[RMDB]
RNA sequence: GGGAACGACUCGAGUAGAGUCGAAAAACGUGUGUAGGAGCCUUCCUAUAGAAACCAUGAUGGCGAACGAUUCUGGUGUCGAUGGGUGUAGACUUGGAGGCAUGCAGGUUCUGCAAGUUAAGAUGCCCUCUGAAGGCCGUUUCGACGGCCUUCAGAGAAAAGAAACAACAACAACAAC
Reactivity to DMS in 0.01 (KOAc 150mM, MgCl2 10mM, bicine 150mM(pH8.5), 24C), signal-to-noise 1, nucleotides 027 to 126: a080c080g110u050g020u000g000u030a060g020g000a060g030c180c090u010u030c010c050u010a100u010a040g000a080a130a060c030c070a070u000g000a020u130g000g000c030g000a080a180c110g000a010u000u000c000u020g000g030u000g030u000c000g010a260u000g040g000g000u030g000u050a010g000a090c040u030u000g020g000a010g010g000c010a030u000g000c100a060g040g000u020u000c050u010g000c000a000a060g030u000u080a130a080g000a040u000g000c060c000
Reactivity to 2A3 in 0.01 (KOAc 150mM, MgCl2 10mM, bicine 150mM(pH8.5), 24C), signal-to-noise 1, nucleotides 027 to 126: a010c030g000u120g000u030g080u020a060g090g060a040g010c020c000u030u030c000c000u020a000u030a070g120a010a080a000c000c000a010u060g040a080u120g100g000c010g000a100a020c000g060a060u020u080c030u000g030g000u000g000u000c000g040a090u030g000g050g000u030g000u010a070g030a120c000u050u060g110g080a090g000g000c000a020u150g050c090a090g010g140u170u000c000u070g050c040a070a140g070u090u020a130a000g020a120u110g000c000c000